[RMDB]
RNA sequence: GGGAACGACUCGAGUAGAGUCGAAAAGAGCAAAGUAAAUGUAAGCCACUGUGCUGGGUGCUAACAGGGAGGAUAAAAGUAAAAGAGAAACAGCCCCGAUAUCUGUCUAACCUUCCUUCCCAGAUGACCCAAACCAAAUUUUCGAAUUUGGUUUGGGAAAAGAAACAACAACAACAAC
Reactivity to DMS in 0.01 (KOAc 150mM, MgCl2 10mM, bicine 150mM(pH8.5), 24C), signal-to-noise 1, nucleotides 027 to 126: g020a030g010c060a090a170a130g020u030a050a170a130u000g000u000a120a130g000c000c020a060c060u000g040u020g010c020u010g000g020g030u010g000c050u000a070a110c300a020g010g000g000a020g010g010a160u010a020a030a100a130g000u000a060a050a070a160g000a100g000a060a130a060c080a060g020c050c000c040c010g000a060u000a030u000c010u000g000u000c050u010a040a080c000c010u000u000c000c000u000u000c000c000c000a150g000a120u020g000a150

About this RNA:
This 177-nucleotide RNA was probed chemically with DMS. DMS (dimethyl sulfate) methylates the pairing face of unpaired adenines and cytosines. For DMS the reverse transcriptase was MarathonRT. Reactivities are rounded to 0.1 and cut off at 0 and 3. For DMS, 543 sequencing reads were counted. Conditions: 150 mM KOAc, 10 mM MgCl2 and 150 mM bicine (pH 8.5), 24 C. Source: RMDB library OK2TRN, as collected in RNAgym.